[RMDB]
RNA sequence: GGGAACGACUCGAGUAGAGUCGAAAAGAUAUGGACACACAAGCGGGAGAGAUGUCUCGGAAACGAGACCUCUCGAGGAUCGCUCGUGUGUCCUAAGUCAAAAGUAUCUUAGUUCGCUAAGAUACAACUAGUGGAUAAACUUCGGUUUAUCCACUAGAAAAGAAACAACAACAACAAC
Reactivity to DMS in 0.01 (KOAc 150mM, MgCl2 10mM, bicine 150mM(pH8.5), 24C), signal-to-noise 3, nucleotides 027 to 126: g000a020u000a180u010g000g000a010c000a000c010a000c000a040a010g020c000g040g000g020a090g010a010g000a020u000g010u010c000u000c020g000g000a050a050a100c000g010a010g000a020c000c060u000c000u000c000g020a100g000g010a090u010c010g010c000u000c050g010u000g020u000g000u000c000c000u000a000a070g000u010c030a110a120a130a170g000u000a000u000c000u000u000a010g000u010u030c300g030c010u000a010a010g000a010u000a000c000a080a150
Reactivity to 2A3 in 0.01 (KOAc 150mM, MgCl2 10mM, bicine 150mM(pH8.5), 24C), signal-to-noise 3, nucleotides 027 to 126: g020a000u040a030u080g000g000a010c000a000c000a000c010a010a010g020c020g070g170g060a090g000a000g000a050u030g000u000c000u000c010g020g030a050a030a010c010g000a010g010a010c010c000u000c000u000c010g000a060g050g150a300u190c020g010c020u010c020g010u010g000u000g000u000c000c010u010a010a000g010u000c010a000a010a020a180g000u010a000u020c000u000u010a030g010u070u050c230g000c280u000a000a000g000a010u010a020c000a020a030